The data come from the RNA Mapping Database (RMDB), library OK2TRN. The record gives the reactivity of an RNA of 177 nucleotides to DMS and 2A3. DMS (dimethyl sulfate) methylates the pairing face of unpaired adenines and cytosines. For 2A3, 1,517 sequencing reads were counted. For 2A3 the reverse transcriptase was SuperScript II with manganese.
RNA sequence: GGGAACGACUCGAGUAGAGUCGAAAACAAUGGAUCUGGUAAACUCCAAGAUGGAUCUUAGACCAGAUCUGAAAGAUAUUAUUGGAGUGUUUGAGAUAGGCGAUGAAACACCUCAUCUAAUUGUGUCCAGUACACUAGACUUCGGUCUAGUGUACUGAAAAGAAACAACAACAACAAC
Reactivity to DMS in 0.01 (KOAc 150mM, MgCl2 10mM, bicine 150mM(pH8.5), 24C), signal-to-noise 3, nucleotides 027 to 126: c050a110a090u010g020g010a010u000c000u000g000g020u000a060a110a130c130u000c010c020a100a140g010a190u010g010g000a070u000c090u000u010a120g010a060c030c020a010g000a020u010c000u000g010a050a080a090g000a060u020a040u000u000a110u010u000g010g010a040g010u000g010u000u000u000g000a070g000a130u000a040g020g030c050g000a090u010g010a100a030a070c040a040c040c050u000c090a030u000c080u010a020a100u010u010g010u000g020u000c040
Reactivity to 2A3 in 0.01 (KOAc 150mM, MgCl2 10mM, bicine 150mM(pH8.5), 24C), signal-to-noise 2, nucleotides 027 to 126: c020a030a010u180g010g010a000u000c010u020g000g000u030a100a120a040c020u000c010c010a000a060g190a220u200g040g020a000u030c000u100u120a090g050a030c010c000a000g000a000u000c000u000g000a050a020a000g070a000u080a040u300u090a060u040u130g020g000a020g000u030g050u030u080u100g110a100g010a050u100a080g090g040c120g070a080u100g110a040a040a000c030a000c000c010u040c020a040u000c010u050a090a100u040u110g060u030g050u000c030